[RMDB]
RNA sequence: GGGAACGACUCGAGUAGAGUCGAAAAACGAAACCCAAGGUGCAUGCCGAGGUGCGGUAGGACUCGUUAACAAACCGCAAAAAAAUAGUCGCAAACGACGAAAACUACGCACUCGCAGCUUAAUAACAGUAGGGUCCCUACUUCGGUAGGGACCCAAGAUAUUCACGGAGUUCGCUCCGUGAAUAUCAAAAGAAACAACAACAACAAC
Reactivity to DMS in 0.01 (KOAc 150mM, MgCl2 10mM, bicine 150mM(pH8.5), 24C), signal-to-noise 1, nucleotides 027 to 156: a110c060g000a140a080a190c010c000c000a120a150g020g020u000g000c030a040u010g010c030c010g040a130g020g010u000g080c040g050g030u000a050g010g010a150c100u000c060g020u000u010a100a140c070a040a070a100c030c030g000c060a000a000a020a100a100a040a250u020a030g000u000c030g030c030a130a080a190c040g020a060c030g000a070a070a080a090c020u010a020c030g000c100a020c050u000c030g040c020a100g020c040u000u000a050a130u000a110a100c050a100g000u010a150g010g060g020u000c000c030c000u020a030c010u000u000c140g100g030u010a000g020g000g000a000c010c000c000a000a010
Reactivity to 2A3 in 0.01 (KOAc 150mM, MgCl2 10mM, bicine 150mM(pH8.5), 24C), signal-to-noise 1, nucleotides 027 to 156: a000c090g000a180a020a000c000c000c000a030a000g070g050u130g060c100a100u040g030c150c000g000a000g030g080u040g010c090g100g130u170a010g010g000a010c010u000c000g020u000u000a030a060c150a130a120a130c100c110g000c000a020a000a000a000a000a180a000u240a080g040u010c050g000c010a120a110a080c090g000a000c000g000a000a000a000a070c000u010a000c000g000c020a000c000u030c010g030c000a000g020c020u100u100a070a010u130a170a000c060a050g080u270a210g040g000g010u010c000c000c000u000a000c000u030u140c230g010g000u030a000g000g000g000a000c000c000c010a000a000